This 207-nucleotide RNA was probed chemically with 2A3. For 2A3, 870 sequencing reads were counted. The reactions ran in a buffer of 150 mM KOAc, 10 mM MgCl2 and 150 mM bicine (pH 8.5), at 24 C. Source: RMDB library M2RFPK, as collected in RNAgym. 2A3 adducts were read by reverse transcription with SuperScript II with manganese.

RNA sequence: GGGAACGACUCGAGUAGAGUCGAAAAGACGUAAUCCGCGCAAAUCCACAAACGCCAACGAUGAGCGUUUCGCUGUAGCCGGUUAAGGCAACAGCCGGGGCCGCCUGAGCCCUGUUACCAAAGACGGGAAACUCGAUGCCAUUCGUGGCAUCGAGAAGUAGCCACUUUUGUUCGCAAAAGUGGCUACAAAAGAAACAACAACAACAAC
Reactivity to 2A3 in 0.01 (KOAc 150mM, MgCl2 10mM, bicine 150mM(pH8.5), 24C), signal-to-noise 1, nucleotides 027 to 156: g020a000c020g010u050a150a010u110c030c050g000c000g000c050a140a040a120u110c050c010a080c050a120a090a040c040g000c020c030a090a050c170g140a230u110g040a010g030c000g010u020u090u100c030g000c000u000g000u070a060g020c000c010g250g000u170u180a100a030g050g000c000a030a010c000a040g000c000c010g000g000g000g000c020c020g060c010c000u020g020a000g020c000c000c000u000g070u070u070a010c020c030a050a000a000g110a040c010g010g010g020a070a000a050c000u000c000g000a000u000g000c000c000a050u070u080c160g100u060g000g000c000a000u000c000g000a000g000a000a000